[RMDB]
RNA sequence: GGGAACGACUCGAGUAGAGUCGAAAAUGUCACACAGUAGCGAGGGAUGCAAUUAAUUGCAUCUACACCAAGCUCAAGGCUUGGAUUUCGACUAGUGUCGAGUCGAUCCCACUCGCUACGCCCACAAGCGAUUAUUCACCUUCGGGUGAAUAAUCGCAAAAGAAACAACAACAACAAC
Reactivity to 2A3 in 0.01 (KOAc 150mM, MgCl2 10mM, bicine 150mM(pH8.5), 24C), signal-to-noise 1, nucleotides 027 to 126: u100g080u110c020a050c000a030c010a220g020u050a010g030c020g000a000g000g020g010a010u000g000c050a030a030u150u230a110a270u000u090g000c000a020u000c000u000a010c020a030c010c020a000a000g000c030u040c090a030a110g270g000c000u000u000g010g000a060u080u020u020c000g000a000c010u000a020g250u040g150u270c020g000a020g000u010c000g000a000u000c000c000c000a000c010u000c000g000c000u010a000c000g040c000c000c000a120c030a050a080

Source: RMDB library M2PK90, as collected in RNAgym. This 177-nucleotide RNA was probed chemically with 2A3. For 2A3 the reverse transcriptase was SuperScript II with manganese.